[RMDB]
RNA sequence: GGGAACGACUCGAGUAGAGUCGAAAAUCGCCCGGCGGGAAGGGUGAAACGCGGUAACCUCCACCUGGAGCAAUCCCAAAUAGGCAGGCGAUGAAGCGGCCCGCUGAGUCUGCGGGUAGGGAGCUGGGUCUAGACUAUCCUUCGGGAUAGUCUAGACAAAAGAAACAACAACAACAAC
Reactivity to DMS in 0.01 (KOAc 150mM, MgCl2 10mM, bicine 150mM(pH8.5), 24C), signal-to-noise 2, nucleotides 027 to 126: u020c090g010c000c010c000g030g000c080g010g020g000a130a100g000g010g050u000g020a050a090a080c070g000c030g070g000u000a100a100c160c000u000c050c030a140c070c080u020g020g030a060g050c090a190a040u000c000c000c080a040a110a090u080a060g000g030c020a020g000g030c020g000a050u020g040a030a050g020c060g020g020c020c030c010g000c010u000g000a120g000u020c020u000g040c000g010g000g000u000a110g050g000g020a080g000c040u000g000g000
Reactivity to 2A3 in 0.01 (KOAc 150mM, MgCl2 10mM, bicine 150mM(pH8.5), 24C), signal-to-noise 3, nucleotides 027 to 126: u080c010g050c000c000c000g000g030c030g000g030g040a060a030g010g020g000u030g080a160a060a010c050g020c070g060g010u020a050a060c000c000u050c020c040a090c020c100u090g040g010a030g030c010a020a030u080c000c000c000a030a070a040u130a020g020g030c020a010g040g010c000g030a100u040g010a080a010g040c010g020g010c000c000c000g020c020u020g040a060g110u060c040u090g030c010g000g020g000u070a090g000g050g000a100g000c050u060g090g040

The record gives the reactivity of an RNA of 177 nucleotides to DMS and 2A3. The reactions ran in a buffer of 150 mM KOAc, 10 mM MgCl2 and 150 mM bicine (pH 8.5), at 24 C. High DMS reactivity at an A or C suggests that its Watson-Crick edge is free. DMS adducts were read by reverse transcription with MarathonRT. For 2A3, 1,536 sequencing reads were counted. The data come from the RNA Mapping Database (RMDB), library RFM100.